The record gives the reactivity of an RNA of 207 nucleotides to 2A3 and DMS. DMS (dimethyl sulfate) methylates the pairing face of unpaired adenines and cytosines. 2A3 adducts were read by reverse transcription with SuperScript II with manganese. Source: RMDB library OK3TST, as collected in RNAgym. The reactions ran in a buffer of 150 mM KOAc, 10 mM MgCl2 and 150 mM bicine (pH 8.5), at 24 C. For DMS, 1,986 sequencing reads were counted. Reactivities are rounded to 0.1 and cut off at 0 and 3.
[RMDB]
RNA sequence: GGGAACGACUCGAGUAGAGUCGAAAAGCGGACUUCAUCAAUGAAAAUUUCGAGAUGAUCAGAGGGAACAUGGAAGAUGUAAUCAAAGAGAUUAUGACAGCUCUUGAAUAUGGCUACAGCUGUACAGAGAAAGUCUUUGAGUACAAAGACGGCAAGACUCUUAUCGGGAUUUCGAUCCCGAUAAGAGAAAAGAAACAACAACAACAAC
Reactivity to 2A3 in 0.01 (KOAc 150mM, MgCl2 10mM, bicine 150mM(pH8.5), 24C), signal-to-noise 2, nucleotides 027 to 156: g040c050g020g000a040c000u020u020c020a040u010c010a060a120u180g090a050a080a040a060u120u170u120c110g030a060g010a080u060g020a020u040c020a020g000a020g040g020g010a010a060c010a010u130g010g000a030a020g040a040u100g030u120a040a010u020c040a080a090a000g050a000g010a040u040u090a060u170g020a010c020a000g020c010u030c020u060u030g030a080a030u100a040u110g030g000c010u070a070c040a100g000c010u060g010u050a060c010a010g100a010g020a050a080a000g050u020c000u000u030u010g010a020g020u010a080c020a040a080a000g020a000c010g000g000c010a010a070g020a040
Reactivity to DMS in 0.01 (KOAc 150mM, MgCl2 10mM, bicine 150mM(pH8.5), 24C), signal-to-noise 1, nucleotides 027 to 156: g080c040g030g000a100c040u000u000c060a090u000c040a100a170u000g040a060a050a050a060u000u020u000c040g020a250g010a040u000g000a140u000c040a090g000a050g000g000g010a060a050c090a070u010g010g010a090a120g030a070u000g000u000a020a070u000c040a040a010a100g020a100g010a120u010u010a070u000g010a100c070a110g040c010u000c040u000u010g000a120a070u000a090u010g010g010c070u000a090c070a010g010c010u000g000u010a120c040a110g000a190g000a060a040a200g000u010c010u000u030u000g000a150g040u010a060c080a010a020a110g010a030c040g010g000c090a040a150g000a240